[RMDB]
Conditions: 150 mM KOAc, 10 mM MgCl2 and 150 mM bicine (pH 8.5), 24 C. The record gives the reactivity of an RNA of 307 nucleotides to 2A3 and DMS. For 2A3, 3,736 sequencing reads were counted.
RNA sequence: GGGAACGACUCGAGUAGAGUCGAAAAAUCCAUGAACCUAGUCAAGGCUCCAGUACACUGCUUUUCAGCGGAAUCACACACUUGGGGCCUGUUACGUUCAUGGGAGAAUGAAUCGGUUCGAUCAUCUUCGCCAUUGGUCUUCGUUUUGGAGGCCAUGGAUCACCGGAGAUUUGGGCUCGGGAAGUCUCUUCAGAGUUGAGUAUGGUGUAUUGCGACCUUUAUGGUGGCGAGGCAGGCUGCACUCAUAGUUUUGGGACAUACACUAAACGUCUAGGUUCGCCUAGACGAAAAGAAACAACAACAACAAC
Reactivity to 2A3 in 0.01 (KOAc 150mM, MgCl2 10mM, bicine 150mM(pH8.5), 24C), signal-to-noise 4, nucleotides 027 to 266: a030u010c000c000a000u000g000a000a020c030c020u040a040g110u130c130a280a060g020g000c000u030c010c010a000g020u030a050c060a060c090u030g060c060u210u190u180u300c170a020g020c040g070g070a100a150u250c070a030c030a040c020a040c200u180u260g000g020g040g200c000c000u010g000u010u010a000c000g000u000u000c000a000u000g000g050g000a060g160a010a080u140g050a030a040u020c020g030g040u030u030c010g020a050u100c020a000u000c010u000u010c020g020c020c000a020u030u160g020g000u010c010u000u000c030g250u140u080u220u300g010g000a010g010g000c000c000a000u000g000g000a020u070c110a040c030c050g000g020a010g000a000u070u100u180g090g070g000c010u010c010g000g000g020a020a010g030u010c000u010c000u130u070c070a080g080a070g110u090u080g040a020g020u110a110u190g060g020u040g010u050a050u060u180g030c060g070a090c010c000u060u170u050a130u160g030g010u040g030g030c020g020a050g040g070c050a030g030g070c030u070g030c030a020c040u100c030a020u070a050g070u070u110u160u130g030g000g010a000c000a010u110a000c060a000c050u170a110a120a040
Reactivity to DMS in 0.01 (KOAc 150mM, MgCl2 10mM, bicine 150mM(pH8.5), 24C), signal-to-noise 8, nucleotides 027 to 266: a080u010c000c000a010u000g000a020a010c010c060u000a050g010u020c050a080a070g010g000c000u000c000c010a030g010u000a130c220a150c020u000g010c020u000u010u020u020c210a050g010c010g010g010a180a130u020c240a140c300a150c210a030c030u000u010g050g010g010g010c000c000u000g000u000u010a030c300g000u000u000c000a010u000g000g000g000a060g010a080a040u000g010a110a110u010c020g000g000u010u000c020g010a110u020c100a080u000c010u000u000c010g010c000c000a020u000u020g030g010u000c010u000u000c000g020u020u020u030u030g010g000a000g000g000c000c000a000u000g000g000a060u010c120a100c300c030g000g000a010g000a030u010u020u010g020g010g010c020u000c030g000g000g010a060a300g000u000c070u000c010u010u010c130a140g010a130g010u000u000g000a070g010u010a050u000g010g020u000g000u010a050u010u000g020c040g000a090c000c000u000u020u010a050u020g010g030u000g010g010c010g000a040g010g010c060a050g010g000c030u000g000c060a040c020u010c020a040u000a070g010u000u000u010u000g000g000g000a100c080a060u010a040c080a050c060u000a060a110a170

Values cover nucleotides 27 to 266.